The data come from the RNA Mapping Database (RMDB), library OK2TRN.
This 177-nucleotide RNA was probed chemically with DMS.
DMS adducts were read by reverse transcription with MarathonRT.
RNA sequence: GGGAACGACUCGAGUAGAGUCGAAAAUGGCACGAUAUUGGCUCACCGCAGCCUCUGCCUCCUGCGUUCAAGUGAUUCUCCCUCCUGCCUCAGCCUCUCGAGUAGCUGGGAUUACAGGUGCCUGCCAAACCACGAGCAGAUUCGUCUGCUCGUGGUUAAAAGAAACAACAACAACAAC
Reactivity to DMS in 0.01 (KOAc 150mM, MgCl2 10mM, bicine 150mM(pH8.5), 24C), signal-to-noise 1, nucleotides 027 to 126: u010g020g010c040a020c090g000a120u010a090u000u010g030g010c000u000c040a130c140c110g040c070a140g010c030c070u010c070u000g010c070c020u010c060c010u000g030c130g000u010u010c090a060a070g050u010g000a100u000u000c040u000c040c000c020u000c030c040u000g040c090c040u010c030a040g020c000c010u000c000u010c090g000a040g010u000a060g020c010u000g000g010g000a100u010u000a070c010a040g000g020u000g000c040c000u010g020c030c060a070
Values cover nucleotides 27 to 126.